RNA sequence: GGGAACGACUCGAGUAGAGUCGAAAAUAAUGGCCUCCCCUCGCCAACGGGGCGUAUGCGUGUGUUUUAAUACCUUGUUGAGGCCUAUAAAACACGCUCGUCAUCCCGGGCGAUGACGAAAACACAGCGAUUGGGAUGUCGGAUUUCAGUCAGUUAACCUACGUACUGGAUUCGUCCAGUACGUAGGAAAAGAAACAACAACAACAAC
Reactivity to 2A3 in 0.01 (KOAc 150mM, MgCl2 10mM, bicine 150mM(pH8.5), 24C), signal-to-noise 4, nucleotides 027 to 156: u140a000a050u060g040g010c000c000u020c000c000c000c000u010c020g030c020c020a130a140c060g000g000g000g040c050g040u130a040u100g020c040g010u020g010u000g020u000u030u000u030a130a110u130a070c020c000u110u130g090u140u250g120a020g000g020c010c020u040a070u040a060a010a000a000c010a000c010g010c000u010c000g020u010c010a040u060c000c020c010g030g060g030c070g020a020u030g000a020c040g030a090a020a050a010c110a010c030a040g070c050g070a080u060u080g040g010g000a020u060g050u110c010g060g060a030u010u050u070c020a040g060u020c010a020g060u200u230a030a050
Reactivity to DMS in 0.01 (KOAc 150mM, MgCl2 10mM, bicine 150mM(pH8.5), 24C), signal-to-noise 3, nucleotides 027 to 156: u010a080a070u000g010g020c050c040u000c020c000c020c100u010c020g000c020c040a130a110c030g010g050g010g040c060g020u010a040u010g020c140g040u000g010u000g000u010u010u010u000a020a240u010a090c000c010u000u000g030u000u010g010a060g030g040c020c080u010a090u010a020a030a040a010c010a020c020g020c040u000c010g020u000c010a030u000c000c000c010g040g020g100c010g020a020u010g000a130c050g020a100a060a070a100c090a080c110a120g010c060g010a120u000u000g010g060g020a090u010g020u000c030g010g020a190u010u000u000c010a070g040u000c040a130g000u010u000a090a300